[RMDB]
RNA sequence: GGGAACGACUCGAGUAGAGUCGAAAAUUGGCGAAUGCCUGUGGAUCUACAUUUGUUGCGGGUUCGAGACCCGUCAGAGCCCGGCUCUGUAGCUCAAUGGUAGAGGGGUGUAUUCACAUAAACUUGUAAAAGACACGUGCCUUCGGGCACGUGUCAACUAUGAUCCAUUCUUCGGAAUGGAUCAUAGAAAAGAAACAACAACAACAAC
Reactivity to DMS in 0.01 (KOAc 150mM, MgCl2 10mM, bicine 150mM(pH8.5), 24C), signal-to-noise 1, nucleotides 027 to 156: u010u000g020g060c050g020a060a030u020g030c020c040u000g060u000g020g020a070u020c010u000a030c060a090u000u000u010g000u000u020g020c030g010g010g040u010u000c060g020a300g010a090c010c020c000g000u000c040a110g030a070g040c040c050c030g090g000c040u000c060u000g010u000a060g040c070u000c020a120a140u000g010g040u010a070g000a140g010g000g030g020u000g000u000a070u010u000c030a040c060a130u000a050a110a170c040u000u000g010u010a070a080a160a260g020a020c010a010c030g020u000g010c020c000u020u020c300g070g040g000c020a000c010g030u010g010u000c000a020a040
Reactivity to 2A3 in 0.01 (KOAc 150mM, MgCl2 10mM, bicine 150mM(pH8.5), 24C), signal-to-noise 2, nucleotides 027 to 156: u090u030g040g000c080g030a240a050u190g010c010c020u020g020u050g050g000a070u010c040u070a050c010a100u060u070u150g080u000u050g030c000g000g000g010u010u060c040g020a040g040a130c000c010c030g000u020c020a020g000a020g010c070c130c040g100g000c010u050c020u000g070u040a020g040c010u000c020a090a140u050g060g000u070a060g020a070g030g010g010g010u040g010u030a060u040u080c040a030c000a090u190a130a140a050c030u060u100g020u060a010a040a070a020g000a000c000a000c010g000u000g000c000c030u050u050c210g020g000g000c030a000c010g000u000g000u000c000a000a000